[RMDB]
RNA sequence: GGGAACGACUCGAGUAGAGUCGAAAAACCUGCAGACCGUCGUCCGUGACGUACUUGAGCACCGCAUUGUCACUCGGAUCGAAUAUGUUCUUGGUCCACGGUGCUAGGCGAGUGAAAAUGUAACGAGAGCUUGCAGCAUCCUUGCCACCAGCAAGACAGAUGCUUCCAUAUUCGUAUGGAAGCAUCUAAAAGAAACAACAACAACAAC
Reactivity to DMS in 0.01 (KOAc 150mM, MgCl2 10mM, bicine 150mM(pH8.5), 24C), signal-to-noise 2, nucleotides 027 to 156: a100c100c010u010g020c020a050g010a030c000c050g000u010c020g020u010c020c030g020u010g000a090c030g030u000a060c060u000u000g010a130g040c010a080c010c030g060c040a080u020u010g020u000c040a080c050u000c040g010g000a070u000c030g030a060a130u030a100u010g020u000u000c090u010u000g000g000u000c040c020a070c020g010g010u000g040c020u000a030g030g010c030g040a070g000u000g000a080a050a030a090u020g020u000a060a050c020g000a130g000a100g000c030u000u000g020c060a080g000c050a150u000c030c010u010u000g010c000c010a090c090c030a160g010c030a050a060g040a230c190
Reactivity to 2A3 in 0.01 (KOAc 150mM, MgCl2 10mM, bicine 150mM(pH8.5), 24C), signal-to-noise 5, nucleotides 027 to 156: a000c010c010u020g020c040a030g040a110c030c040g120u050c010g010u020c060c040g040u070g030a030c040g030u100a080c040u060u090g050a010g010c000a020c020c010g010c070a140u100u170g120u160c030a040c060u060c060g010g020a030u040c030g050a050a060u190a150u220g150u110u080c070u050u080g010g010u000c000c000a020c030g000g010u010g000c000u010a050g030g040c020g020a030g020u120g020a040a030a010a060u120g020u070a040a030c050g020a050g020a030g210c060u020u040g010c020a010g000c010a030u060c010c000u000u020g000c000c020a080c030c010a020g060c040a040a040g060a030c020
The record gives the reactivity of an RNA of 207 nucleotides to DMS and 2A3.
Values are in units of 0.01, from 0 to 300, in steps of 10.
The 2A3 profile rests on 6,315 reads.
The reactions ran in a buffer of 150 mM KOAc, 10 mM MgCl2 and 150 mM bicine (pH 8.5), at 24 C.
For DMS, 5,516 sequencing reads were counted.